[RMDB]
RNA sequence: GGGAACGACUCGAGUAGAGUCGAAAAGAGUGUACAUCAACCAUACCAUAUGGAAGAUGACACGAUCAUCCACAAUACUCUUAGAAACAUGGGUACUCGGAGAGAGACAGGUAGACUGGCAAACCUGACCCCUAGCGUAUUUCGAUACGCUAGGGGUAAAAGAAACAACAACAACAAC
Reactivity to DMS in 0.01 (KOAc 150mM, MgCl2 10mM, bicine 150mM(pH8.5), 24C), signal-to-noise 2, nucleotides 027 to 126: g000a200g030u000g030u000a040c000a000u010c000a020a300c000c000a000u000a110c300c230a040u010a000u010g000g000a050a270g020a000u010g020a080c010a050c000g000a110u010c060a120u020c010c060a070c300a150a060u010a040c020u000c020u010u010a040g010a240a090a060c050a050u010g000g010g010u000a040c010u000c190g010g010a050g010a110g000a190g010a070c040a060g030g010u000a070g000a070c070u000g000g000c130a000a040a050c040c000u000g000
Reactivity to 2A3 in 0.01 (KOAc 150mM, MgCl2 10mM, bicine 150mM(pH8.5), 24C), signal-to-noise 2, nucleotides 027 to 126: g130a040g000u020g010u050a230c020a020u020c010a050a010c030c000a000u050a140c090c060a090u020a010u300g030g000a020a020g010a000u000g020a010c010a000c010g040a020u030c040a060u020c000c010a000c050a040a040u110a070c030u040c030u120u090a040g130a170a090a020c070a080u120g120g000g000u020a020c010u020c060g090g000a070g020a030g020a000g060a080c020a010g020g020u020a040g050a210c110u070g020g070c060a040a070a090c010c000u000g060
Chemical mapping of a 177-nucleotide RNA with DMS and 2A3.
It was measured as part of the RMDB library OK2TRN.
Values cover nucleotides 27 to 126.
DMS adducts were read by reverse transcription with MarathonRT.
The reactions ran in a buffer of 150 mM KOAc, 10 mM MgCl2 and 150 mM bicine (pH 8.5), at 24 C.